[RMDB]
RNA sequence: GGGAACGACUCGAGUAGAGUCGAAAAGAUAUGGAGGAUGGAACUACCUCAUUACUCGGAAACGAGUACCUCGGGAGGCCCGCUCCUCCUAAGUCAAAAGCCUCUUGAGCUUCGGCUCAAGAGGCAAUCAUUGUAACACCUUCGGGUGUUACAAUGAAAAAGAAACAACAACAACAAC
Reactivity to DMS in 0.01 (KOAc 150mM, MgCl2 10mM, bicine 150mM(pH8.5), 24C), signal-to-noise 3, nucleotides 027 to 126: g010a070u000a260u010g000g000a000g000g000a040u010g000g000a040a100c060u010a210c000c000u000c200a130u010u000a010c000u000c010g000g000a100a060a150c010g010a010g000u000a010c270c200u010c160g010g020g000a030g030g020c210c000c100g000c240u010c000c000u000c020c000u000a020a070g010u000c060a080a080a190a100g000c000c000u000c020u020u000g000a000g010c000u000u000c250g020g000c000u000c000a030a000g010a000g000g010c000a000a000
Reactivity to 2A3 in 0.01 (KOAc 150mM, MgCl2 10mM, bicine 150mM(pH8.5), 24C), signal-to-noise 2, nucleotides 027 to 126: g020a010u050a030u110g020g000a000g000g010a030u150g010g040a090a130c050u250a300c100c010u040c000a040u010u150a010c010u000c000g000g010a030a040a030c010g000a000g000u020a030c000c090u130c050g040g070g000a050g000g030c030c020c000g010c100u000c000c010u020c010c000u000a100a030g040u050c030a000a030a060a240g010c000c000u000c010u010u000g000a000g020c030u050u160c300g150g000c000u010c000a000a010g010a000g000g000c000a000a000

The record gives the reactivity of an RNA of 177 nucleotides to DMS and 2A3.
The DMS profile rests on 1,812 reads.
For DMS the reverse transcriptase was MarathonRT.
Values cover nucleotides 27 to 126.
The RNA was probed in 150 mM KOAc, 10 mM MgCl2 and 150 mM bicine (pH 8.5) at 24 C.